This 177-nucleotide RNA was probed chemically with DMS and 2A3. Conditions: 150 mM KOAc, 10 mM MgCl2 and 150 mM bicine (pH 8.5), 24 C. DMS adducts were read by reverse transcription with MarathonRT.
RNA sequence: GGGAACGACUCGAGUAGAGUCGAAAAUAUACAGGCUGUCCCAGUGUUGACAUUUCAGGAUGCUUGGAUUGGAGAGCAAUCAGAGAGUGUUUGGGAGCAGGUGACCCUGGGGCUGCACACCCAGGUGCACUGCGAUCCUAUUCGUAGGAUCGCAGUGAAAAGAAACAACAACAACAAC
Reactivity to DMS in 0.01 (KOAc 150mM, MgCl2 10mM, bicine 150mM(pH8.5), 24C), signal-to-noise 9, nucleotides 027 to 126: u010a100u010a110c110a110g010g010c040u000g000u000c010c000c010a080g010u010g020u010u000g000a060c060a060u000u010u000c050a120g010g010a040u000g010c010u000u000g020g020a200u010u000g010g010a190g000a060g010c020a020a030u000c010a090g000a120g000a040g010u000g010u000u000u010g010g010g000a080g010c070a040g010g020u010g000a120c070c010c000u010g000g000g010g000c050u000g000c110a060c090a090c000c000c010a030g010g010u000g010
Reactivity to 2A3 in 0.01 (KOAc 150mM, MgCl2 10mM, bicine 150mM(pH8.5), 24C), signal-to-noise 6, nucleotides 027 to 126: u110a000u010a030c030a020g140g000c020u030g030u040c010c010c000a020g030u070g070u100u150g060a030c030a090u050u070u050c040a050g030g050a030u030g020c020u030u040g070g080a170u140u210g110g060a240g010a030g150c030a030a080u030c010a010g090a010g000a020g090u030g010u020u130u080g040g010g000a060g050c050a030g050g120u060g030a030c020c000c000u020g000g000g020g020c050u130g020c050a020c000a000c040c000c000a010g050g030u050g030